[RMDB]
RNA sequence: GGGAACGACUCGAGUAGAGUCGAAAACGCUGGAUAAAGAUCUGAUCACGCUCAAAGCACAGUUAGAAAUGCUGAAGCAACACAAAGGCAUUAACGACACCAUUUCGCAGCAACGAAAAUCGCUAUGGGCUACCGAAGCGCAAAUCCAGGUAUUAGACCACUUACAAAGAUUCGUCUUUGUAAGUGGAAAAGAAACAACAACAACAAC
Reactivity to 2A3 in 0.01 (KOAc 150mM, MgCl2 10mM, bicine 150mM(pH8.5), 24C), signal-to-noise 7, nucleotides 027 to 156: c040g020c010u010g020g000a030u060a090a210a060g060a080u060c040u100g040a080u100c060a020c120g010c000u010c030a050a050a000g010c010a020c040a080g000u050u080a050g060a070a070a010u020g000c010u020g030a090a060g070c080a120a080c040a020c050a110a100a030g020g000c010a000u030u040a070a050c040g030a000c010a040c060c040a070u030u040u040c070g000c070a220g040c040a100a050c020g030a020a010a020a070u110c040g000c010u020a060u060g000g020g000c000u030a050c030c080g080a080a020g070c040g000c090a060a110a020u000c000c000a000g000g020u060a120u050u060a050g050a040
Reactivity to DMS in 0.01 (KOAc 150mM, MgCl2 10mM, bicine 150mM(pH8.5), 24C), signal-to-noise 4, nucleotides 027 to 156: c030g050c020u000g010g010a080u000a070a120a160g000a130u010c030u000g020a120u000c090a080c070g000c010u000c060a130a120a130g030c040a040c050a250g000u000u000a130g000a130a090a020u000g010c000u000g010a130a170g020c010a080a080c080a160c070a040a100a230g010g010c020a070u000u010a000a050c030g010a100c000a040c030c020a080u000u000u000c000g000c050a110g010c150a110a110c010g020a040a030a110a200u000c010g050c010u000a070u010g020g000g000c030u000a040c070c050g020a100a050g000c030g010c020a040a070a080u010c020c000a040g020g010u000a080u000u010a100g010a260

Background: Conditions: 150 mM KOAc, 10 mM MgCl2 and 150 mM bicine (pH 8.5), 24 C. Structure probing data (2A3 and DMS) for a 207-nucleotide construct. It was measured as part of the RMDB library OK3TST. For DMS the reverse transcriptase was MarathonRT.